[RMDB]
RNA sequence: GGGAACGACUCGAGUAGAGUCGAAAAGGAUGAGCAUCUGAUUGAACGCGCCCAGCGGGAGCAGGACGAGGAGCUGCAGCGCAUUAUCGCCAGCCGCGUGCAGUACCAGGGUGAGAGCCUGACCGAGGUCUAAGUGCCAUUUCGAUGGCACUUAGACAAAAGAAACAACAACAACAAC
Reactivity to DMS in 0.01 (KOAc 150mM, MgCl2 10mM, bicine 150mM(pH8.5), 24C), signal-to-noise 2, nucleotides 027 to 126: g000g060a040u010g010a050g020c040a080u000c050u020g030a160u000u000g000a060a190c030g030c080g020c050c030c000a130g000c030g010g000g010a110g040c050a050g030g000a040c030g020a120g030g030a300g020c020u000g020c090a120g000c040g010c070a100u000u010a090u010c150g000c080c070a110g030c150c050g010c060g000u020g010c000a070g010u000a100c060c060a100g010g000g030u000g000a080g020a120g020c030c020u000g010a140c040c070g010a130g000
Reactivity to 2A3 in 0.01 (KOAc 150mM, MgCl2 10mM, bicine 150mM(pH8.5), 24C), signal-to-noise 1, nucleotides 027 to 126: g030g010a030u060g100a010g010c040a020u060c030u030g070a210u080u120g060a070a040c100g000c000g050c050c020c010a030g040c020g030g000g000a040g000c060a030g000g080a010c050g040a040g020g040a030g000c030u030g030c030a050g000c000g000c060a040u090u200a090u300c070g030c060c020a030g000c050c030g020c030g020u030g000c030a000g020u050a100c030c020a040g060g020g020u110g040a120g010a040g040c000c020u010g020a070c010c060g050a040g010

The record gives the reactivity of an RNA of 177 nucleotides to DMS and 2A3. For 2A3, 1,374 sequencing reads were counted. For 2A3 the reverse transcriptase was SuperScript II with manganese. For DMS the reverse transcriptase was MarathonRT. Reactivities are given for positions 27 through 126.